Structure probing data (DMS) for a 177-nucleotide construct. DMS (dimethyl sulfate) methylates the pairing face of unpaired adenines and cytosines. The reactions ran in a buffer of 150 mM KOAc, 10 mM MgCl2 and 150 mM bicine (pH 8.5), at 24 C. For DMS, 543 sequencing reads were counted. Source: RMDB library OK2TRN, as collected in RNAgym.
RNA sequence: GGGAACGACUCGAGUAGAGUCGAAAAUUAGGAUUCACCAAAGAAAAGAUCGGCAAGAUGCUUUCAUCGGCUGCGACCACACUUAGGGCCUGCAGGGAUCUAGGAUCUUAUGGAUUGGAGAUACUCACACUGGGGUAUCCUUCGGGAUACCCCAGUGAAAAGAAACAACAACAACAAC
Reactivity to DMS in 0.01 (KOAc 150mM, MgCl2 10mM, bicine 150mM(pH8.5), 24C), signal-to-noise 1, nucleotides 027 to 126: u000u020a080g000g000a160u040u000c020a090c040c020a040a070a130g000a190a050a030a050g000a060u000c020g010g030c100a050a080g000a060u000g010c120u000u000u020c040a040u000c040g030g040c070u020g030c010g000a050c040c070a050c100a110c170u040u020a100g030g010g030c040c030u000g010c110a040g000g000g000a030u000c020u010a110g000g010a030u000c000u000u000a040u000g040g050a120u010u000g000g010a070g040a120u010a040c140u010c220a190